[RMDB]
RNA sequence: GGGAACGACUCGAGUAGAGUCGAAAAGUAGGUUUAUCUGACAAGAUAGUGACCUGCCGCUACCAUCAGUUCGUUAAUGGCUGAACGCCUCUAAGUCAGAAACGAUUCUAGAAACUGUAAAUUUACUCCAGUAGUUUGGUUUCGACCAAACUACUGGAAAAGAAACAACAACAACAAC
Reactivity to 2A3 in 0.01 (KOAc 150mM, MgCl2 10mM, bicine 150mM(pH8.5), 24C), signal-to-noise 2, nucleotides 027 to 126: g020u000a030g050g030u030u070u000a010u000c030u080g110a060c090a130a020g000a010u010a000g160u100g190a020c000c000u010g000c000c010g040c030u090a060c000c000a120u170c030a010g040u060u040c000g010u000u010a080a010u040g030g000c030u020g040a100a060c020g110c030c000u020c000u020a030a000g000u000c010a000g020a000a020a010c020g020a080u100u150c040u090a060g100a050a160a120c050u010g080u190a000a060a060u100u110u100a120c040u010